[RMDB]
RNA sequence: GGGAACGACUCGAGUAGAGUCGAAAACUGAUUAAAAACAAGGCAGUAGUAAAUGAAGACACCCAAGGAAAUGUGAGCCAGCUCCAAGCUGAAGUGAAGAGGCUCAAAGAACAACUGGCGGAGCUUGCUAUGCCUUACCUUUCGAGGUAAGGCAUAGAAAAGAAACAACAACAACAAC
Reactivity to 2A3 in 0.01 (KOAc 150mM, MgCl2 10mM, bicine 150mM(pH8.5), 24C), signal-to-noise 2, nucleotides 027 to 126: c010u020g030a020u100u190a070a080a060a030a050c050a100a050g070g000c000a000g020u060a000g020u040a020a180a180u140g060a090a000g050a030c020a050c030c010c000a030a000g080g030a090a190a070u180g040u070g000a000g000c010c010a030g000c010u000c020c030a070a000g000c060u030g080a150a000g040u050g100a080a050g030a070g120g000c020u030c030a040a090a000g020a050a030c040a030a010c080u020g020g010c040g090g010a010g010c050u060u030g010
Reactivity to DMS in 0.01 (KOAc 150mM, MgCl2 10mM, bicine 150mM(pH8.5), 24C), signal-to-noise 3, nucleotides 027 to 126: c030u020g010a160u000u030a040a050a100a090a090c090a060a080g010g020c020a030g000u000a070g010u010a030a070a110u010g000a070a070g000a070c090a090c020c020c040a060a090g020g010a040a090a050u000g010u000g020a060g010c020c030a080g030c050u000c040c060a050a110g010c070u010g010a040a110g010u010g000a060a080g020a190g000g000c040u010c110a040a080a110g000a060a030c130a050a090c060u010g000g010c040g020g010a040g010c030u000u000g000